[RMDB]
RNA sequence: GGGAACGACUCGAGUAGAGUCGAAAAGAACUUUGGCCGGCUCGGAAUAGCAUCAGGGGGUGCAAACUGCCCACUGGCAGAAAGGAUUAUAGCAAAUGCGUACCCUAUUGCAAUACAGCCCGGCCAACAUAGACUACUCUAUUCGUAGAGUAGUCAACAUAUGAAACUCCUUCGGGAGUUUCAUAUGAAAAGAAACAACAACAACAAC
Reactivity to 2A3 in 0.01 (KOAc 150mM, MgCl2 10mM, bicine 150mM(pH8.5), 24C), signal-to-noise 3, nucleotides 027 to 156: g030a080a020c030u020u020u010g000g020c020c000g020g000c010u030c100g020g060a200a040u100a130g000c000a030u080c150a060g000g040g000g010g000u090g000c030a050a090a090c020u020g000c000c010c090a220c240u180g010g000c040a020g070a050a080a020g090g040a070u180u120a140u290a160g060c080a030a090a070u030g000c040g010u120a120c000c000c000u060a090u010u080g000c010a020a000u010a070c000a010g030c060c070c000g000g000c000c000a000a000c000a000u030a010g000a000c000u000a000c000u000c010u000a060u050u070c140g060u050a010g010a000g000u000a000g000u000c000a000a000
Reactivity to DMS in 0.01 (KOAc 150mM, MgCl2 10mM, bicine 150mM(pH8.5), 24C), signal-to-noise 2, nucleotides 027 to 156: g020a130a130c030u000u010u010g040g000c000c000g040g140c050u000c040g040g040a220a140u000a180g050c030a010u000c130a080g010g000g000g030g010u010g010c010a010a060a210c030u010g020c030c000c120a110c170u020g000g030c030a090g000a150a090a080g030g020a180u000u000a120u010a130g040c030a050a050a140u000g010c000g010u000a170c000c000c030u030a090u010u010g020c060a080a060u000a090c050a060g000c110c020c030g010g000c000c010a010a010c090a120u010a170g010a080c000u000a010c000u020c000u000a040u000u000c280g030u000a030g000a030g000u000a010g030u000c020a040a100